[RMDB]
RNA sequence: GGGAACGACUCGAGUAGAGUCGAAAAUAUCUAUAAUAAGGAGAUGGAUGACUUUGAUGAAGGGUGUAUUAAAGUGCUAGAAGAAACAGCUGAGAGGCAUGCAGCAUGGGAGAUAAGUCUCAAACGGAACUUAGAGCUUAGUCAGAAAAGGCAUCAGAGAAAGUCAUACAUUCGUGUAUGACUUUCUAAAAGAAACAACAACAACAAC
Reactivity to 2A3 in 0.01 (KOAc 150mM, MgCl2 10mM, bicine 150mM(pH8.5), 24C), signal-to-noise 2, nucleotides 027 to 156: u080a030u040c010u070a100u020a270a080u160a100a060g030g010a030g010a050u100g000g000a020u020g010a010c020u080u070u100g040a050u060g030a090a010g040g020g000u050g020u030a090u080u120a080a030a020g030u030g080c030u030a020g000a080a020g030a000a160a020c010a030g010c020u050g030a030g010a000g090g000c010a030u040g030c010a010g010c020a010u060g010g000g010a060g010a050u040a050a000g050u000c000u000c000a060a090a020c040g030g000a030a020c020u030u050a060g010a000g030c010u040u040a030g030u060c020a010g070a040a060a000a010g030g000c010a010u110c020a030g060
Reactivity to DMS in 0.01 (KOAc 150mM, MgCl2 10mM, bicine 150mM(pH8.5), 24C), signal-to-noise 2, nucleotides 027 to 156: u000a080u000c000u000a130u040a090a100u010a090a120g000g010a100g010a090u000g020g050a090u010g000a060c040u000u010u000g040a070u000g010a030a050g000g000g030u010g030u010a070u030u000a060a060a070g040u010g010c030u000a050g030a100a060g030a070a070a070c090a100g010c050u000g010a080g020a050g030g010c040a040u000g010c100a070g000c020a110u020g040g000g030a070g010a110u000a030a110g010u020c010u010c040a020a110a300c120g000g020a030a040c020u010u000a070g000a110g000c030u020u000a030g000u000c060a070g010a060a040a070a070g000g020c020a050u010c060a170g010
Chemical mapping of a 207-nucleotide RNA with 2A3 and DMS. For 2A3 the reverse transcriptase was SuperScript II with manganese. For 2A3, 1,718 sequencing reads were counted. The reactions ran in a buffer of 150 mM KOAc, 10 mM MgCl2 and 150 mM bicine (pH 8.5), at 24 C. Reactivities are rounded to 0.1 and cut off at 0 and 3. The DMS profile rests on 2,668 reads.